About this RNA:
Structure probing data (2A3 and DMS) for a 177-nucleotide construct. Source: RMDB library OK1LIB, as collected in RNAgym. For DMS, 8,389 sequencing reads were counted. The RNA was probed in 150 mM KOAc, 10 mM MgCl2 and 150 mM bicine (pH 8.5) at 24 C.

RNA sequence: GGGAACGACUCGAGUAGAGUCGAAAAGAGCUAAUAUCUACUUCGUUUGUGCAUAUCACUAUAGGGAAGCUGAUGGGCGUUCAAGCUUGCGAGAAAUCGCAGUGCCUAGUGGAAUGAACGGCUCGAAGGGUAUUGAAUACUUCGGUAUUCAAUACCCAAAAGAAACAACAACAACAAC
Reactivity to 2A3 in 0.01 (KOAc 150mM, MgCl2 10mM, bicine 150mM(pH8.5), 24C), signal-to-noise 6, nucleotides 027 to 126: g050a010g030c030u070a060a030u070a110u190c020u040a070c010u060u070c030g300u030u050u070g060u050g020c050a030u070a040u210c010a010c030u060a020u100a160g070g050g010a050a000g000c030u020g030a050u070g010g020g000c000g030u040u050c020a020a010g010c000u020u040g000c000g000a020g020a020a050a030u030c000g000c020a040g030u060g090c010c000u030a050g040u050g060g060a060a070u100g020a040a010c030g040g010c000u000c010g020a080a070
Reactivity to DMS in 0.01 (KOAc 150mM, MgCl2 10mM, bicine 150mM(pH8.5), 24C), signal-to-noise 4, nucleotides 027 to 126: g000a020g000c020u000a110a110u030a090u000c020u050a120c010u010u010c070g000u020u000u020g000u000g010c130a080u020a070u040c010a030c040u000a070u010a060g000g010g000a040a030g020c030u010g010a100u010g000g010g010c020g020u000u000c070a140a170g000c020u010u000g000c030g000a010g000a060a090a130u010c000g010c010a000g000u040g020c030c060u010a060g030u040g010g010a090a070u030g000a040a060c060g010g000c000u000c060g010a140a120

For 2A3, 5,173 sequencing reads were counted.